[RMDB]
RNA sequence: GGGAACGACUCGAGUAGAGUCGAAAAUGAAUCCUUUGCAGACGACUUAAAACGCGACGGGGCAUUGUAAGUGGCAGAGUGGCCUUGCUGCCACGAUCCACUGAGAUCCAGCCCCACGUCGCACGGAGAUGUUCCUGGUGUUCGCACCAGGAACAUCAAAAGAAACAACAACAACAAC
Reactivity to DMS in 0.01 (KOAc 150mM, MgCl2 10mM, bicine 150mM(pH8.5), 24C), signal-to-noise 2, nucleotides 027 to 126: u060g010a100a100u020c030c000u000u000u000g020c080a080g000a130c050g020a020c090u010u020a040a040a080a100c140g000c020g000a020c010g040g020g030g030c000a060u000u000g020u000a100a030g020u000g000g000c100a050g000a300g030u000g000g010c010c030u040u020g000c270u030g020c000c040a030c010g010a140u000c010c000a000c020u000g000a200g030a110u010c060c150a200g000c030c000c000c000a050c080g010u000c000g050c010a070c180g000g000a190
Reactivity to 2A3 in 0.01 (KOAc 150mM, MgCl2 10mM, bicine 150mM(pH8.5), 24C), signal-to-noise 2, nucleotides 027 to 126: u130g060a000a010u120c010c010u060u040u030g040c050a040g030a090c020g030a060c070u070u160a030a120a070a060c110g000c010g000a000c000g040g000g000g000c040a050u050u110g060u130a030a030g000u030g050g010c150a030g020a000g050u000g020g000c010c020u060u200g110c280u250g010c020c000a000c000g000a000u000c000c020a010c000u000g030a010g000a050u030c060c020a070g010c000c000c000c000a010c000g020u000c000g010c010a050c040g090g020a090